Chemical mapping of a 170-nucleotide RNA with 2A3 and DMS. Source: RMDB library 15KLIB, as collected in RNAgym. 2A3 adducts were read by reverse transcription with SuperScript II with manganese. Reactivities are given for positions 27 through 129. Conditions: 150 mM KOAc, 10 mM MgCl2 and 150 mM bicine (pH 8.5), 24 C. In probing experiments dimethyl sulfate is read out at A N1 and C N3, which are open when not base-paired.
RNA sequence: GGGAACGACUCGAGUAGAGUCGAAAAACAGUGAAACCUGGCGCAGCAUUUAGUGUGUUAGCAUGCUAUAAUGGUCGUCCGACUGGUACAUUCACUGUUGUAAUGCGCCCUAACUACACAAUUAAGGACAGCCGGGGGUUCGCCCCCGGCAAAAGAAACAACAACAACAAC
Reactivity to 2A3 in 0.01 (KOAc 150mM, MgCl2 10mM, bicine 150mM(pH8.5), 24C), signal-to-noise 1, nucleotides 027 to 129: a000c000a000g000u000g020a000a070a010c000c000u000g040g050c000g000c100a070g040c020a000u010u020u020a000g000u080g010u050g000u000u000a100g090c000a000u000g010c020u030a000u000a190a000u000g080g150u060c000g000u000c000c000g000a070c060u010g000g000u080a110c060a000u000u000c000a010c000u000g020u000u000g000u110a100a090u080g000c030g000c030c000c000u000a080a010c030u120a010c040a010c000a200a120u060u070a140a020g100g050a020c000a010
Reactivity to DMS in 0.01 (KOAc 150mM, MgCl2 10mM, bicine 150mM(pH8.5), 24C), signal-to-noise 2, nucleotides 027 to 129: a020c030a000g000u000g000a000a060a060c010c050u000g070g000c060g000c080a110g020c040a030u000u000u000a000g000u000g010u000g050u070u040a160g050c000a140u030g010c000u060a000u010a020a050u060g020g030u000c050g000u040c130c140g040a000c100u000g000g050u000a100c300a250u040u000c000a030c000u050g000u020u010g000u100a070a060u030g000c180g030c080c000c070u050a040a070c070u020a070c040a080c170a000a080u030u010a010a050g100g000a030c110a120